Chemical mapping of a 207-nucleotide RNA with 2A3. The data come from the RNA Mapping Database (RMDB), library ARCHII. The RNA was probed in 150 mM KOAc, 10 mM MgCl2 and 150 mM bicine (pH 8.5) at 24 C. 2A3 adducts were read by reverse transcription with SuperScript II with manganese.
RNA sequence: GGGAACGACUCGAGUAGAGUCGAAAAGACGCGAUUUUCGGCCACAGGAUUGUGAAAACGCUGCAUCCCGUCCGAUCUGCGCAGCCAAGCACAACACCGCUCAGUCAGUAGGAAGGUGGGGGACCAUUUCCGAAUCCUGGGUGCCGAAGUUAAAUAACCCCUAUGCUUAGUUCGCUAAGCAUAGGGGAAAAGAAACAACAACAACAAC
Reactivity to 2A3 in 0.01 (KOAc 150mM, MgCl2 10mM, bicine 150mM(pH8.5), 24C), signal-to-noise 2, nucleotides 027 to 156: g090a020c050g030c090g210a060u160u120u010u010c020g020g000c010c170a030c010a010g040g000a040u040u040g030u040g080a040a060a140a090c120g010c070u070g000c060a060u030c020c000c000g000u000c010c030g050a100u070c020u040g040c090g010c130a000g050c030c050a020a070g080c020a020c020a100a200c050a090c040c020g000c000u010c020a040g070u080c000a010g010u010a010g030g080a020a000g070g010u050g030g010g030g030g030a050c000c020a130u040u000u040c000c030g050a010a020u000c000c000u010g010g020g070u100g000c000c000g030a000a030g000u030u050a020a150a140u200a060a070